The data come from the RNA Mapping Database (RMDB), library OK1LIB. Chemical mapping of a 177-nucleotide RNA with 2A3 and DMS. 2A3 adducts were read by reverse transcription with SuperScript II with manganese.
RNA sequence: GGGAACGACUCGAGUAGAGUCGAAAAGGCCUAUUAAAUCACGGGCUGUGAUAACUAAAGUAUGUUUCGAAGAAGGACGUAGCAUAAUUGGUAGACUGAAAUCUGUGAUGUUAGUGCGUACAAAGACUGCUCUUUCAUACUUCGGUAUGAAAGAGCAAAAAGAAACAACAACAACAAC
Reactivity to 2A3 in 0.01 (KOAc 150mM, MgCl2 10mM, bicine 150mM(pH8.5), 24C), signal-to-noise 1, nucleotides 027 to 126: g060g000c050c000u190a190u090u160a200a040a000u070c000a010c000g000g060g050c080u000g040u000g110a300u250a180a000c010u010a160a080a000g020u010a020u000g040u000u020u030c230g050a260a180g060a020a000g180g000a000c020g000u040a000g060c000a080u000a000a010u010u050g070g000u060a000g000a020c000u000g110a000a000a090u000c000u000g040u000g000a000u000g010u080u250a140g010u180g220c000g000u000a020c060a060a000a040g090a000c000
Reactivity to DMS in 0.01 (KOAc 150mM, MgCl2 10mM, bicine 150mM(pH8.5), 24C), signal-to-noise 2, nucleotides 027 to 126: g000g000c000c010u000a090u020u060a160a060a000u020c060a040c040g000g000g000c050u000g050u000g000a110u050a030a130c040u020a000a000a050g020u040a030u020g010u020u010u020c010g000a090a140g030a130a020g010g010a150c030g020u010a000g000c050a030u020a000a060u000u010g000g000u000a000g000a080c020u000g000a120a040a130u010c010u040g040u000g010a000u010g030u000u030a000g020u000g000c020g000u000a120c240a060a020a140g000a180c230